An RNA of 177 nucleotides, treated with DMS and 2A3 and read out base by base. As a SHAPE reagent, 2A3 marks flexible, mostly unpaired nucleotides at the ribose 2'-OH. The data come from the RNA Mapping Database (RMDB), library OK1LIB.
RNA sequence: GGGAACGACUCGAGUAGAGUCGAAAACUGCACACGCUCUGCCCGAAGCUGUGUUGUGUGGGGAGAUCGGACGGUGAGAUCCGAUGAAGCUGGUGCAACUGAGUAUCCGUGAGGAUUUGAAUGCAGGGCGUUUAGCGACCUUCGGGUUGCUAAGCGCAAAAGAAACAACAACAACAAC
Reactivity to DMS in 0.01 (KOAc 150mM, MgCl2 10mM, bicine 150mM(pH8.5), 24C), signal-to-noise 9, nucleotides 027 to 126: c040u000g010c030a050c060a060c070g010c010u000c040u020g000c010c010c020g020a120a080g010c040u010g010u010g010u010u010g010u000g010u000g010g000g010g010a140g010a060u000c000g000g000a030c050g010g030u040g010a280g000a150u000c000c010g000a020u000g000a100a110g010c030u010g000g000u000g000c030a070a090c060u010g000a090g010u010a030u000c000c000g010u040g000a170g000g000a030u010u020u020g000a100a080u030g000c030a040g000g000
Reactivity to 2A3 in 0.01 (KOAc 150mM, MgCl2 10mM, bicine 150mM(pH8.5), 24C), signal-to-noise 9, nucleotides 027 to 126: c010u020g000c000a010c000a000c020g010c000u010c020u030g030c000c000c000g020a050a010g010c040u040g000u010g010u130u090g010u010g010u050g010g020g010g020a070g000a020u010c000g000g000a000c010g020g040u230g080a070g010a100u000c000c000g000a010u010g030a030a010g020c030u030g000g030u050g000c010a030a040c040u050g040a020g060u060a030u000c000c010g040u090g070a100g030g010a020u040u060u100g070a070a020u080g010c010a020g010g050